[RMDB]
RNA sequence: GGGAACGACUCGAGUAGAGUCGAAAAAGACGGCAGUUUCAGUGUUGUGUAGAGUGUGAGUUUUUACGUGUUUAUACUUCACUGUAUACUGCUCGCUUAUUCUACAUAUGAUCCGUCGAAUAAAGAAGGCAGUAUGCAUGUUCGCAUGCAUACUGCCAAAAGAAACAACAACAACAAC
Reactivity to 2A3 in 0.01 (KOAc 150mM, MgCl2 10mM, bicine 150mM(pH8.5), 24C), signal-to-noise 2, nucleotides 027 to 126: a020g000a000c030g000g000c000a030g040u000u000u040c000a000g040u030g040u010u050g000u000g000u000a000g000a010g010u160g020u040g000a110g110u000u040u080u000u210a050c040g110u140g180u000u070u000a020u010a100c050u010u000c000a000c000u090g010u000a010u000a040c000u000g030c040u000c000g020c000u050u000a090u030u000c000u150a100c000a060u290a090u240g090a110u010c050c010g130u060c080g000a100a040u110a080a000a140g140a020a020
An RNA of 177 nucleotides, treated with 2A3 and read out base by base. 2A3 adducts were read by reverse transcription with SuperScript II with manganese. The reactions ran in a buffer of 150 mM KOAc, 10 mM MgCl2 and 150 mM bicine (pH 8.5), at 24 C. For 2A3, 1,103 sequencing reads were counted. Reactivities are given for positions 27 through 126.